[RMDB]
RNA sequence: GGGAACGACUCGAGUAGAGUCGAAAAGAUAUGGACGACGACAUGAAAUUGUCUCGGAAACGAGACAAAUUUCAACAGCGUUAGUCCUAAGUCAAAACAACUACUUGUGUUCGCACAAGUAGUUGAACAAUUAUAGGCUCUUCGGAGCCUAUAAUUGAAAAGAAACAACAACAACAAC
Reactivity to 2A3 in 0.01 (KOAc 150mM, MgCl2 10mM, bicine 150mM(pH8.5), 24C), signal-to-noise 2, nucleotides 027 to 126: g010a040u080a030u150g000g010a000c010g010a000c000g040a060c030a140u110g020a020a010a030u020u000g020u000c000u010c000g030g030a050a070a030c010g010a000g000a000c010a000a050a010u000u010u000c020a040a020c050a040g050c010g020u030u080a120g000u070c000c000u020a110a020g070u060c040a020a030a130a190c000a000a030c000u000a000c000u010u000g010u010g050u080u100c300g070c120a000c000a000a010g000u000a000g000u000u000g000a000a000
Reactivity to DMS in 0.01 (KOAc 150mM, MgCl2 10mM, bicine 150mM(pH8.5), 24C), signal-to-noise 3, nucleotides 027 to 126: g000a040u000a300u010g000g000a020c010g010a010c000g010a080c060a250u010g000a010a010a010u000u000g000u000c000u000c000g000g000a080a060a130c010g030a010g010a000c000a000a000a050u000u000u000c000a030a060c270a130g000c000g000u000u000a050g030u000c000c000u010a030a100g020u000c030a110a060a150a190c000a000a010c000u000a010c000u000u010g030u000g000u000u010c200g020c010a010c000a010a010g010u000a000g000u000u000g000a060a150